[RMDB]
Chemical mapping of a 177-nucleotide RNA with 2A3 and DMS.
2A3 adducts were read by reverse transcription with SuperScript II with manganese.
For DMS, 2,942 sequencing reads were counted.
Source: RMDB library OK2TRN, as collected in RNAgym.
RNA sequence: GGGAACGACUCGAGUAGAGUCGAAAACUGUGUCCUCAUAGUGAGGACCCAUGGGGCUUCACCCAGGACAGCCUGGUUCGCCUGCCCUCCGAUGCUGGUGGAGGGGAGGCAAGGCAGAGGGGACUCCACCCUUCUACAGGUUCGCCUGUAGAAGGGUAAAAGAAACAACAACAACAAC
Reactivity to 2A3 in 0.01 (KOAc 150mM, MgCl2 10mM, bicine 150mM(pH8.5), 24C), signal-to-noise 2, nucleotides 027 to 126: c030u030g010u020g020u060c000c010u030c020a100u230a090g270u180g070a010g010g000a010c010c010c000a100u030g000g010g040g000c020u070u060c050a260c060c000c010a000g020g090a050c060a020g020c000c000u100g130g000u170u170c090g000c010c010u100g120c030c000c000u000c000c000g060a110u240g170c150u190g070g200u140g060g000a000g020g000g000g030a010g000g000c000a000a010g010g000c000a000g060a010g020g000g010g000a010c000u020c010c000
Reactivity to DMS in 0.01 (KOAc 150mM, MgCl2 10mM, bicine 150mM(pH8.5), 24C), signal-to-noise 3, nucleotides 027 to 126: c060u010g000u010g000u000c000c000u000c020a240u010a160g010u010g020a010g010g010a030c020c050c050a060u010g010g020g020g000c210u010u010c080a120c020c050c060a100g010g010a140c190a130g010c020c010u010g010g000u000u010c170g000c020c010u000g020c010c000c000u000c000c010g000a110u000g020c200u010g040g020u020g010g010a040g010g010g020g010a010g010g010c010a010a000g010g000c010a050g020a140g010g010g000g000a120c050u000c030c030